[RMDB]
RNA sequence: GGGAACGACUCGAGUAGAGUCGAAAAGAGGCGAAAUAAUUCCCAUCUCCUAUGUACGGCCGGAGAUGGGUAUGGCCGUACUAAUAAGCCUCAUAGUGACGAGAGUCACGAAUUCUGGAUAGCCUAUGGUAGUCGGCUAUCCUAUGACUACCGUAGAAGCUGAGGUAAUCUUCGGAUUACCUCAGCUAAAAGAAACAACAACAACAAC
Reactivity to 2A3 in 0.01 (KOAc 150mM, MgCl2 10mM, bicine 150mM(pH8.5), 24C), signal-to-noise 1, nucleotides 027 to 156: g010a010g020g000c050g040a000a110a170u160a070a090u220u000c000c000c000a020u050c040u000c010c020u150a080u140g000u040a000c000g010g020c020c070g060g040a230g020a100u220g000g000g000u080a050u060g030g000c000c000g000u000a000c000u030a010a030u110a080a000g000c000c000u000c000a020u190a020g030u000g030a030c010g000a000g010a030g180u000c000a000c010g040a030a000u140u060c030u090g000g050a110u110a020g010c010c000u000a000u020g040g010u000a040g000u050c020g050g000c000u070a170u080c000c050u080a110u130g000a000c010u010a000c020c000g030u000a000g000a050